Source: RMDB library 15KLIB, as collected in RNAgym. An RNA of 170 nucleotides, treated with 2A3 and DMS and read out base by base. The DMS profile rests on 8,547 reads. Values cover nucleotides 27 to 129. Values are in units of 0.01, from 0 to 300, in steps of 10. For DMS the reverse transcriptase was MarathonRT. For 2A3 the reverse transcriptase was SuperScript II with manganese.

RNA sequence: GGGAACGACUCGAGUAGAGUCGAAAACGCACGGGAUAGGAGUAAGACCAUAGCGAUAGGGAGAGAUGCUAGGAGUUAGAGGAGACCGAAGCGAGGAGGAAAGCAAAGAAAGCAACGGGGCUAGCCGGGAGUCAGUCGUUCGCGACUGACAAAAGAAACAACAACAACAAC
Reactivity to 2A3 in 0.01 (KOAc 150mM, MgCl2 10mM, bicine 150mM(pH8.5), 24C), signal-to-noise 3, nucleotides 027 to 129: c030g000c020a040c020g040g000g000a060u130a110g030g000a060g070u080a110a000g060a010c010c000a070u100a030g040c040g020a060u140a070g020g020g010a000g010a000g010a020u100g010c020u050a070g030g020a030g030u020u020a040g030a030g030g000a010g030a000c000c010g010a050a020g040c020g020a020g020g010a020g010g000a050a010a000g020c040a010a010a080g030a000a030a000g010c010a000a080c060g000g000g010g020c010u030a020g000c000c030g000g000g000a020
Reactivity to DMS in 0.01 (KOAc 150mM, MgCl2 10mM, bicine 150mM(pH8.5), 24C), signal-to-noise 2, nucleotides 027 to 129: c040g020c040a110c110g030g050g000a160u000a080g060g000a000g080u000a090a070g050a080c070c040a000u030a080g020c070g010a060u000a050g050g030g000a020g020a050g000a060u000g000c070u050a010g020g030a050g070u010u010a040g040a120g000g030a140g010a000c040c010g000a080a070g060c210g040a040g000g000a000g020g010a050a010a050g000c220a010a020a140g030a040a070a030g020c100a030a070c190g000g050g000g000c100u040a060g050c000c050g000g000g000a030